RNA sequence: GGGAACGACUCGAGUAGAGUCGAAAAUCAAGCCGUUUCGACGGCUUGAACACUUUAGAGUCCUGAGGGACUACGAUCCAGAGUACCGGAGGAACUCUAAGGCCUAGCCCUGCUUCGGCAGGGCUAACUUAGAAAUGGGGUUCGCCCCAUUUCUAAGAAAAGAAACAACAACAACAAC
Reactivity to 2A3 in 0.01 (KOAc 150mM, MgCl2 10mM, bicine 150mM(pH8.5), 24C), signal-to-noise 3, nucleotides 027 to 126: u010c010a000a000g000c020c010g010u020u050u140c200g120a010c000g010g010c000u000u000g010a000a000c010a020c010u000u020u030a000g000a010g000u000c020c000u000g070a080g000g010g020a000c020u120a180c080g160a150u170c080c080a060g010a010g110u040a220c000c010g050g170a010g000g040a130a070c000u000c000u000a010a000g000g010c000c010u000a010g000c010c000c000u010g000c020u030u110c270g070g000c000a000g160g000g010c000u000a000a000
Reactivity to DMS in 0.01 (KOAc 150mM, MgCl2 10mM, bicine 150mM(pH8.5), 24C), signal-to-noise 3, nucleotides 027 to 126: u010c000a010a010g000c000c000g020u000u010u010c190g010a020c010g020g020c010u000u010g010a010a060c150a150c010u000u000u000a020g000a020g000u000c000c000u000g020a300g000g000g010a020c020u000a030c060g000a110u010c230c140a170g000a020g000u000a070c010c000g000g010a280g000g000a020a030c000u000c010u010a000a020g010g000c030c010u000a010g010c000c000c000u000g000c010u000u010c140g020g000c010a000g000g010g000c000u000a000a040
The data come from the RNA Mapping Database (RMDB), library M2PK50. The record gives the reactivity of an RNA of 177 nucleotides to 2A3 and DMS. DMS adducts were read by reverse transcription with MarathonRT.